This 177-nucleotide RNA was probed chemically with 2A3 and DMS.
DMS adducts were read by reverse transcription with MarathonRT.
The reactions ran in a buffer of 150 mM KOAc, 10 mM MgCl2 and 150 mM bicine (pH 8.5), at 24 C.
[RMDB]
RNA sequence: GGGAACGACUCGAGUAGAGUCGAAAACGCCAGUUCGCUGUAUUCAGAGGAGACUGCCAAAGUGUUUCGCGCUGAACAAGCUGAAGUAGAACGACAAAACACCCAAAUGGCAACGGUUUUCGCCUCACUUUUACUACCACUUCGGUGGUAGUAAAAGAAAAGAAACAACAACAACAAC
Reactivity to 2A3 in 0.01 (KOAc 150mM, MgCl2 10mM, bicine 150mM(pH8.5), 24C), signal-to-noise 1, nucleotides 027 to 126: c010g050c020c000a040g010u010u010c080g020c020u030g030u120a270u100u050c040a010g010a020g080g000a000g020a040c070u110g030c050c040a100a040a050g090u050g000u020u030u050c040g030c010g000c050u010g030a080a060c060a130a020g040c080u100g060a080a000g030u090a030g020a080a000c040g120a000c070a070a060a010a030c020a070c030c000c000a000a050a120u100g000g000c030a030a050c060g040g000u010u020u070u100c030g040c000c010u030c000a080
Reactivity to DMS in 0.01 (KOAc 150mM, MgCl2 10mM, bicine 150mM(pH8.5), 24C), signal-to-noise 2, nucleotides 027 to 126: c130g000c050c040a060g000u000u000c030g030c030u000g020u000a110u000u010c050a020g010a100g010g000a070g020a030c110u000g030c060c060a030a110a110g010u010g010u000u020u000c050g020c050g020c030u010g000a080a060c130a120a020g000c050u000g020a060a070g010u020a100g010a040a090c060g000a110c120a070a020a060a030c050a080c010c050c050a060a050a110u000g010g020c030a040a110c120g020g000u000u000u000u010c060g000c030c020u000c070a210